[RMDB]
The record gives the reactivity of an RNA of 177 nucleotides to DMS. The RNA was probed in 150 mM KOAc, 10 mM MgCl2 and 150 mM bicine (pH 8.5) at 24 C. The DMS profile rests on 786 reads.
RNA sequence: GGGAACGACUCGAGUAGAGUCGAAAAGUCAUUAACGCGUGUGCACUGUCUAACACGAAUUACCCAGUUAUUUUCGACUUUACUCGAGUCGUUAUAGCGUGAUAUGAGAGAGUAAUCCGCGACCAAAGAAUCCUACAACUUUCGAGUUGUAGGAUUCAAAAGAAACAACAACAACAAC
Reactivity to DMS in 0.01 (KOAc 150mM, MgCl2 10mM, bicine 150mM(pH8.5), 24C), signal-to-noise 1, nucleotides 027 to 126: g010u020c160a090u020u010a050a030c210g020c010g040u000g030u000g000c100a090c110u010g000u000c030u000a060a080c000a000c000g000a110a070u000u020a050c090c050c040a070g000u000u000a020u000u020u000u000c000g000a010c000u010u030u020a000c010u000c000g060a000g010u000c000g000u010u000a020u000a150g040c010g010u010g000a030u010a060u030g000a130g000a150g010a090g030u030a120a050u000c020c000g050c010g020a300c010c020a080a070a110